[RMDB]
RNA sequence: GGGAACGACUCGAGUAGAGUCGAAAAUCAGGUGUCUUCGGACACCUGAAAAGAAAGCGGAAAACACGGAAAUAAAACGGUGAGGGCCGCAACCCACCAUAAAAACUUCUGGGUUCGCCCAGAAGAACUGUUAUCCUUAGUUCGCUAAGGAUAACAGAAAAGAAACAACAACAACAAC
Reactivity to DMS in 0.01 (KOAc 150mM, MgCl2 10mM, bicine 150mM(pH8.5), 24C), signal-to-noise 2, nucleotides 027 to 126: u000c020a000g000g010u000g000u010c010u000u010c230g060g010a010c000a000c000c000u000g000a010a030a040a140g010a090a150a120g010c010g000g000a070a020a060a140c070a020c000g000g000a040a120a140u010a080a060a080a080c020g000g010u000g000a090g030g000g000c010c020g000c000a110a090c000c000c010a100c250c110a120u020a030a030a050a130a140c010u000u000c000u000g000g010g000u020u010c210g010c000c000c030a000g000a010a010g000a030a110
Reactivity to 2A3 in 0.01 (KOAc 150mM, MgCl2 10mM, bicine 150mM(pH8.5), 24C), signal-to-noise 3, nucleotides 027 to 126: u020c000a000g010g000u000g010u000c020u040u100c280g040g000a000c000a000c010c000u000g010a010a000a000a010g040a020a030a000g000c000g010g030a060a060a060a000c060a030c020g070g120a160a170a080u210a050a150a060a000c020g040g020u030g040a060g050g050g020c040c010g000c010a010a040c000c000c000a020c000c030a060u240a060a150a040a060a080c010u000u000c000u010g030g000g080u030u040c200g060c020c010c000a000g020a000a000g000a000a020